Description
Structure probing data (DMS and 2A3) for a 207-nucleotide construct. DMS adducts were read by reverse transcription with MarathonRT. The 2A3 profile rests on 2,587 reads. The RNA was probed in 150 mM KOAc, 10 mM MgCl2 and 150 mM bicine (pH 8.5) at 24 C.
RNA sequence: GGGAACGACUCGAGUAGAGUCGAAAACGCAAAGCUGCAGCGCGGCGCUCUGGAGGCCUUGCCCCGCGUACUGCUCUUUACAUGGCCCGACGUGAGGGCACUUCGCGGGCAGUGCUGCGGCCUCGUGAAACUGCCCCUAAGUUCGCUUAGGGGCAAACAAUUCGUAUACCUUCGGGUAUACGAAUUGAAAAGAAACAACAACAACAAC
Reactivity to DMS in 0.01 (KOAc 150mM, MgCl2 10mM, bicine 150mM(pH8.5), 24C), signal-to-noise 1, nucleotides 027 to 156: c020g030c030a030a030a040g000c040u000g050c020a020g000c020g010c040g000g060c060g010c020u000c040u030g010g000a200g040g020c020c040u000u000g000c040c000c000c030g030c030g030u010a020c060u000g030c000u000c030u010u000u010a150c080a120u000g010g000c020c060c030g020a130c100g060u000g030a080g020g000g000c010a010c020u000u000c000g020c070g000g040g040c010a080g010u010g040c000u000g020c000g000g010c040c010u010c080g040u000g000a300a060a050c040u000g000c000c000c000c000u020a010a030g000u000u000c300g040c000u000u000a020g000g000g010g040c000a000a000a000
Reactivity to 2A3 in 0.01 (KOAc 150mM, MgCl2 10mM, bicine 150mM(pH8.5), 24C), signal-to-noise 3, nucleotides 027 to 156: c020g010c020a040a020a010g000c000u010g010c010a000g020c000g010c020g160g030c100g040c060u030c080u130g180g030a060g000g040c020c070u060u100g010c010c010c000c000g000c000g010u010a080c030u020g050c000u040c020u070u130u140a100c080a080u160g090g000c010c050c060g050a010c020g000u000g020a240g030g000g010c000a010c010u030u020c010g020c040g060g000g000c010a010g010u030g020c000u000g000c000g000g000c000c000u000c010g000u030g030a130a020a000c040u030g000c000c000c000c000u000a000a000g020u020u090c130g040c130u000u000a000g000g000g000g000c000a000a000a000